This 177-nucleotide RNA was probed chemically with 2A3 and DMS. The 2A3 profile rests on 2,733 reads. The data come from the RNA Mapping Database (RMDB), library TTRDEL. The reactions ran in a buffer of 150 mM KOAc, 10 mM MgCl2 and 150 mM bicine (pH 8.5), at 24 C. Values cover nucleotides 27 to 126. For 2A3 the reverse transcriptase was SuperScript II with manganese.

RNA sequence: GGGAACGACUCGAGUAGAGUCGAAAAGAUAUGGAUCGAGGUGGAGGAAGACCGAGCUCGGAAACGAGCUUUCUUCCUAUGAAGCCUCGAGUCCUAAGUCAAAGACAGCUUGUUCGCAAGCUGUCAAGAUUAUUAAAAACUUCGGUUUUUAAUAAUCAAAAGAAACAACAACAACAAC
Reactivity to 2A3 in 0.01 (KOAc 150mM, MgCl2 10mM, bicine 150mM(pH8.5), 24C), signal-to-noise 1, nucleotides 027 to 126: g010a000u000a010u030g000g020a000u000c010g000a000g000g010u040g000g000a010g020g000a000a000g000a020c070c110g050a000g030c010u010c000g000g010a000a030a000c000g000a000g030c000u000u000u000c000u000u020c000c000u220a300u050g000a000a000g000c000c010u000c000g000a010g010u060c010c000u000a000a020g000u010c030a060a060a020g000a020c000a000g020c010u040u020g030u100u240c200g060c160a000a000g000c000u000g000u000c000a000a010
Reactivity to DMS in 0.01 (KOAc 150mM, MgCl2 10mM, bicine 150mM(pH8.5), 24C), signal-to-noise 3, nucleotides 027 to 126: g010a030u000a020u010g010g010a170u010c010g010a010g010g010u000g000g030a010g010g010a020a000g000a030c300c180g000a020g020c000u000c000g010g010a010a020a020c000g010a020g000c000u000u000u000c010u010u000c010c000u000a180u010g000a110a250g000c000c000u000c000g010a020g000u010c000c000u000a000a110g000u000c020a090a090a130g000a020c010a020g010c000u000u000g000u000u010c200g020c000a010a010g010c000u010g000u000c000a010a050